An RNA of 177 nucleotides, treated with DMS and 2A3 and read out base by base.
RNA sequence: GGGAACGACUCGAGUAGAGUCGAAAAGAUAUGGAAAGUACGAAUUCUAUUCGUGCGAAGAACUCGGAAACGAGGGAGCACUGUAGAACUAUACUUUCCUAAGUCAAAAGAGAUCUUCGGAUCUCAAGAUAAUCGCUAAGUUCGCUUAGCGAUUAUCAAAAGAAACAACAACAACAAC
Reactivity to DMS in 0.01 (KOAc 150mM, MgCl2 10mM, bicine 150mM(pH8.5), 24C), signal-to-noise 4, nucleotides 027 to 126: g000a030u010a300u010g000g000a010a010a010g000u000a010c080g000a040a100u000u000c010u000a010u000u010c300g010u000g000c000g010a070a150g010a180a220c000u000c000g010g010a110a090a160c000g000a020g010g000g020a090g020c000a010c000u000g000u000a010g010a000a010c060u000a180u000a010c010u000u000u000c000c000u000a020a120g000u020c050a090a060a130a130g000a020g010a010u000c010u000u010c230g020g000a010u000c000u000c000a020a050
Reactivity to 2A3 in 0.01 (KOAc 150mM, MgCl2 10mM, bicine 150mM(pH8.5), 24C), signal-to-noise 3, nucleotides 027 to 126: g020a020u060a000u160g000g000a020a000a000g000u020a020c120g130a140a300u000u030c000u020a020u070u160c150g000u000g000c030g190a060a050g000a010a020c010u000c000g020g030a100a070a030c000g000a020g000g000g010a010g000c000a000c020u010g000u000a010g000a010a000c010u040a030u020a060c000u010u010u000c000c000u000a070a020g030u010c020a010a010a100a110g000a000g000a010u000c020u100u120c300g060g010a010u000c000u010c000a000a000
The DMS profile rests on 3,113 reads. The data come from the RNA Mapping Database (RMDB), library TTRDEL. The reactions ran in a buffer of 150 mM KOAc, 10 mM MgCl2 and 150 mM bicine (pH 8.5), at 24 C.